[RMDB]
RNA sequence: GGGAACGACUCGAGUAGAGUCGAAAACCUCUUCCCCGCUACCACCCGUUGCUACAACGUGCAUGCGCCGCAUACACGCAACGUGCGAACACACGAGAUACUCCGAUCACGCUCUCGCUGGUCGUCGGGAGCUACUAGGGUUCGCCUUAGUAGCUCCAAAAGAAACAACAACAACAAC
Reactivity to 2A3 in 0.01 (KOAc 150mM, MgCl2 10mM, bicine 150mM(pH8.5), 24C), signal-to-noise 9, nucleotides 027 to 126: c000c000u030c010u030u030c000c000c000c000g030c030u070a060c000c030a040c030c020c010g030u030u050g020c030u070a090c040a170a040c080g050u040g010c010a030u050g020c070g130c060c060g010c010a020u040a080c040a010c050g040c030a070a040c040g040u050g030c030g090a080a010c040a000c000a000c060g010a020g010a100u100a110c020u030c040c020g010a060u040c030a020c090g030c010u030c010u040c060g040c040u030g020g020u020c020g030u020c030g050
Reactivity to DMS in 0.01 (KOAc 150mM, MgCl2 10mM, bicine 150mM(pH8.5), 24C), signal-to-noise 5, nucleotides 027 to 126: c030c000u020c060u010u000c010c000c010c040g010c070u000a060c020c020a060c030c020c020g000u000u000g000c080u010a110c130a110a170c110g010u010g010c040a070u010g000c060g000c090c060g000c030a030u010a040c060a060c060g000c090a070a060c060g000u000g000c020g000a090a060c080a090c070a100c020g020a080g000a090u030a090c050u020c040c010g000a100u010c070a100c080g010c050u010c050u000c060g020c070u000g010g000u000c040g010u030c060g000

This 177-nucleotide RNA was probed chemically with 2A3 and DMS. The 2A3 profile rests on 34,145 reads.